[RMDB]
RNA sequence: GGGAACGACUCGAGUAGAGUCGAAAAAAAUCGCUAUGCCCACGCCUGGUAGCAGGGGCUUGCAGCCCGAUGUAGACUGGAUACCGUAGCCUAGGGUUGCGACGUACGCGUAUAGACGGCUGUUAUAUCACUUCUCGCUAUUCGUAGCGAGAAGUGAAAAAGAAACAACAACAACAAC
Reactivity to DMS in 0.01 (KOAc 150mM, MgCl2 10mM, bicine 150mM(pH8.5), 24C), signal-to-noise 1, nucleotides 027 to 126: a060a070a050u000c050g070c040u000a080u000g010c030c000c020a130c240g000c020c010u010g000g010u000a070g030c000a130g060g000g010g040c070u000u000g030c070a100g040c000c000c020g010a110u000g040u000a010g010a060c050u010g020g010a100u000a040c060c030g010u000a030g010c020c010u010a160g040g000g010u000u000g010c020g000a070c110g000u000a070c070g010c050g000u000a040u000a080g000a260c270g000g000c020u000g020u010u020a140u010a190